This 177-nucleotide RNA was probed chemically with 2A3 and DMS. As a SHAPE reagent, 2A3 marks flexible, mostly unpaired nucleotides at the ribose 2'-OH. The data come from the RNA Mapping Database (RMDB), library M2PK50. Values cover nucleotides 27 to 126.

RNA sequence: GGGAACGACUCGAGUAGAGUCGAAAAGUUACACGCUUCGGCGUGUAACAAAUACUCAAACGGUCGCGGAAACGAGAGGACACUCUACGAGGCAUCCAUGCAAAACCCAUUGCUUCGGCAAUGGGAAGCGUAUAGUGUUCUUCGGAACACUAUACGCAAAAGAAACAACAACAACAAC
Reactivity to 2A3 in 0.01 (KOAc 150mM, MgCl2 10mM, bicine 150mM(pH8.5), 24C), signal-to-noise 1, nucleotides 027 to 126: g000u000u000a000c010a010c010g000c020u020u030c160g070g010c020g010u000g000u000a000a000c000a000a000a000u040a000c000u000c000a000a120a060c070g040g050u060c020g030c100g300g000a030a080a060c050g000a020g010a000g100g020a010c030a010c030u000c020u040a050c070g010a030g030g000c000a000u010c020c010a020u110g060c020a020a030a110a170c020c000c010a000u010u000g010c000u030u030c240g090g000c010a000a000u000g000g000g020a000a010
Reactivity to DMS in 0.01 (KOAc 150mM, MgCl2 10mM, bicine 150mM(pH8.5), 24C), signal-to-noise 2, nucleotides 027 to 126: g010u000u000a000c000a000c000g000c000u000u000c240g020g000c000g030u000g040u020a000a000c000a040a090a120u000a130c020u000c010a060a130a190c090g010g010u000c040g040c090g000g000a040a070a070c060g000a070g030a070g030g000a120c090a130c000u000c020u000a090c070g010a040g000g000c020a070u000c030c080a100u000g000c200a070a040a140a110c000c000c000a000u000u000g000c000u000u010c170g020g000c000a010a000u000g010g000g020a000a010